[RMDB]
RNA sequence: GGGAACGACUCGAGUAGAGUCGAAAAUCAAUCAUGUUCGCAUGAUUGAAAAGGUCAGGUGACCAAACCACGACACGCGUCGAAGCGUCCGAGCCCGGAGGCAAAGUGCAAUCUUCGGAUUGCACAAGUAGAAUUUAUGGUUCGCCAUAAAUUCUACAAAAGAAACAACAACAACAAC
Reactivity to 2A3 in 0.01 (KOAc 150mM, MgCl2 10mM, bicine 150mM(pH8.5), 24C), signal-to-noise 6, nucleotides 027 to 126: u010c000a000a000u010c000a000u000g030u050u060c160g020c110a000u010g010a010u000u010g000a030a040a010a010g040g010u020c050a030g000g300u100g230a030c010c000a040a050a000c040c020a060c040g040a020c030a010c060g090c040g050u080c060g070a090a020g010c010g070u000c010c010g040a040g080c040c040c000g010g030a030g030g000c060a100a070a020g000u000g010c000a000a000u000c000u030u090c240g080g000a000u000u000g010c000a000c000a000a010
Reactivity to DMS in 0.01 (KOAc 150mM, MgCl2 10mM, bicine 150mM(pH8.5), 24C), signal-to-noise 6, nucleotides 027 to 126: u000c010a010a000u000c000a000u000g000u000u010c210g020c010a000u000g010a010u000u000g000a010a050a100a080g010g010u000c020a160g020g030u010g010a050c030c020a060a090a130c060c030a140c060g010a060c060a060c150g010c100g020u010c090g020a090a140g010c020g000u000c020c020g020a110g000c020c010c020g000g000a070g000g020c120a070a090a110g010u000g000c000a000a000u000c000u010u000c210g030g000a010u000u000g010c000a000c000a010a060

Structure probing data (2A3 and DMS) for a 177-nucleotide construct. Source: RMDB library M2PK50, as collected in RNAgym. The RNA was probed in 150 mM KOAc, 10 mM MgCl2 and 150 mM bicine (pH 8.5) at 24 C. For DMS, 6,788 sequencing reads were counted.